Annotation: An RNA of 207 nucleotides, treated with 2A3 and DMS and read out base by base. Values cover nucleotides 27 to 156. In probing experiments dimethyl sulfate is read out at A N1 and C N3, which are open when not base-paired. The reactions ran in a buffer of 150 mM KOAc, 10 mM MgCl2 and 150 mM bicine (pH 8.5), at 24 C.
RNA sequence: GGGAACGACUCGAGUAGAGUCGAAAAUAUCGAUCAGUGGCAGCAGGAUGUGCUGGUAGACCUUCUCAAGCGGAAUGUCAAAACUCUGAACGAGUGGCAGACUAUGUGGGCUUUCAUACGCGAACACUUCGAAGUUCGCAAGCUUGAGCAGAAGGGCGUAACAUUCCUACUUCGGUAGGAAUGUUACAAAAGAAACAACAACAACAAC
Reactivity to 2A3 in 0.01 (KOAc 150mM, MgCl2 10mM, bicine 150mM(pH8.5), 24C), signal-to-noise 5, nucleotides 027 to 156: u120a020u040c050g020a010u040c040a040g050u050g080g030c010a030g030c020a010g080g130a140u070g060u050g060c030u010g000g010u020a050g040a050c010c020u030u010c020u010c030a040a030g000c020g070g060a080a050u110g020u020c020a060a060a040a060c020u040c030u150g080a100a060c070g010a020g020u020g030g000c050a030g010a040c020u020a050u120g060u090g040g030g030c010u050u130u100c060a080u080a120c110g010c030g050a030a000c040a020c050u110u280c090g030a110a030g010u010u010c000g000c000a000a020g000c010u030u030g000a020g000c020a010g010a040a020g010g020g010c040
Reactivity to DMS in 0.01 (KOAc 150mM, MgCl2 10mM, bicine 150mM(pH8.5), 24C), signal-to-noise 3, nucleotides 027 to 156: u010a050u000c020g030a060u020c040a060g030u000g000g010c020a080g020c040a190g030g010a260u000g020u000g020c050u000g040g010u000a030g010a060c030c020u020u000c000u000c020a040a070g020c030g050g030a040a090u000g020u000c020a100a100a140a070c010u000c010u000g010a090a180c110g020a060g020u000g020g010c090a200g000a110c010u000a100u010g020u000g000g020g020c070u000u010u020c040a090u000a110c140g030c000g000a050a050c050a100c120u000u000c110g000a110a110g000u010u000c000g010c010a060a060g010c020u000u000g010a080g070c120a050g040a050a020g030g010g020c070